[RMDB]
RNA sequence: GGGAACGACUCGAGUAGAGUCGAAAACCAUUUCUCGAGGACGUCCUCCCUUCCUCCCCUCCGGGUCCUCUUCGUCUCGGACUGGCUCAUCUUCGGAGUGGGGGCGGCGGCGUCUGGUCUCUUAUUUAUAGCCAAGCCUUCGGGCUUGGCAAAAGAAACAACAACAACAAC
Reactivity to 2A3 in 0.01 (KOAc 150mM, MgCl2 10mM, bicine 150mM(pH8.5), 24C), signal-to-noise 2, nucleotides 027 to 129: c010c010a020u070u070u030c120u010c020g000a020g020g000a000c020g020u060c060c010u090c000c020c000u130u130c000c000u000c000c000c000c000u000c000c000g010g000g020u000c000c040u050c000u070u100c050g070u070c120u100c120g010g010a000c000u020g050g000c010u000c080a080u000c050u160u020c050g000g000a020g000u010g040g000g090g000g000c000g010g000c050g010g000c000g020u000c000u010g000g000u030c030u010c000u000u080a130u070u210u100a040u260a020
Reactivity to DMS in 0.01 (KOAc 150mM, MgCl2 10mM, bicine 150mM(pH8.5), 24C), signal-to-noise 1, nucleotides 027 to 129: c000c000a160u090u130u010c040u000c060g040a040g000g040a040c000g070u100c000c000u060c010c020c100u000u000c070c000u000c030c010c040c100u060c070c000g000g060g000u110c090c000u070c040u050u030c030g040u060c080u040c140g000g020a050c190u000g020g010c140u100c140a040u000c010u010u050c080g050g050a100g060u000g000g010g050g000g040c300g020g000c210g020g070c090g030u000c020u040g030g060u080c010u080c010u040u030a120u050u080u180a100u060a140